RNA sequence: GGGAACGACUCGAGUAGAGUCGAAAAUGCUCAUCUACUUCCUGGUCGCGCACCUGACGCUGACCGAGCUGCACGGCUUGUGAGCGGCCCCGGUUUAGUGGGUUAGGGACUUUCCGGCGCAGUGCAGACACCGAAGUACGUUCGCGUACUUCGGUGUAAAAGAAACAACAACAACAAC
Reactivity to 2A3 in 0.01 (KOAc 150mM, MgCl2 10mM, bicine 150mM(pH8.5), 24C), signal-to-noise 3, nucleotides 027 to 126: u120g040c050u060c050a090u010c020u150a130c060u090u050c030c010u070g010g030u040c000g000c000g000c000a200c100c130u070g120a120c020g000c070u110g000a020c000c020g000a000g000c010u010g000c010a020c030g010g000c030u100u100g050u050g030a040g030c000g010g030c000c000c010c000g080g110u060u200u160a120g050u260g080g130g000u020u090a070g010g000g130a140c000u100u020u000c020c000g030g020c070g000c060a060g000u020g000c030a000g010
Reactivity to DMS in 0.01 (KOAc 150mM, MgCl2 10mM, bicine 150mM(pH8.5), 24C), signal-to-noise 1, nucleotides 027 to 126: u030g000c010u000c020a020u030c090u060a110c130u000u000c000c070u000g010g000u000c040g000c000g030c000a210c200c160u010g020a060c000g000c000u020g000a040c060c000g000a140g000c000u000g000c010a060c010g020g000c000u060u000g000u010g000a030g030c060g000g000c000c000c010c000g050g000u000u090u000a010g030u090g000g000g000u000u000a070g000g000g030a060c160u080u040u030c050c010g010g030c070g000c120a020g000u000g000c000a040g000